[RMDB]
RNA sequence: GGGAACGACUCGAGUAGAGUCGAAAAGAUAUGGAGAAGUCAUCAACAGCACGCCAUCGGAAACGAUGGUCGUGACAUGAUGUCACUCCUAAGUCAAAACGCCCUGUUGCUUCGGCAACAGGGCGAACGUAAUGGAGAGGUUCGCCUCUCCAUUACGAAAAGAAACAACAACAACAAC
Reactivity to DMS in 0.01 (KOAc 150mM, MgCl2 10mM, bicine 150mM(pH8.5), 24C), signal-to-noise 2, nucleotides 027 to 126: g010a030u000a280u020g000g020a000g010a160a190g010u000c000a000u000c010a050a110c260a190g000c000a020c040g000c000c000a010u000c010g000g010a090a040a070c010g020a010u000g000g000u010c020g050u000g000a060c100a100u010g000a000u000g000u000c040a270c010u000c010c000u000a030a070g000u000c000a080a070a050a210c010g010c000c010c010u000g010u000u010g000c010u000u000c230g010g030c000a010a000c000a000g010g000g000c000g000a000a000
Reactivity to 2A3 in 0.01 (KOAc 150mM, MgCl2 10mM, bicine 150mM(pH8.5), 24C), signal-to-noise 2, nucleotides 027 to 126: g000a010u020a010u080g020g000a030g030a300a070g080u020c010a010u000c030a030a300c090a210g070c000a000c010g000c020c000a010u020c000g010g010a020a000a000c020g020a000u020g010g200u030c010g000u010g030a050c000a130u140g000a000u000g030u000c010a020c020u000c000c000u000a060a020g050u020c010a010a020a090a150c020g010c000c000c000u050g020u000u040g010c040u070u080c260g170g000c030a010a010c000a000g030g060g000c000g020a020a010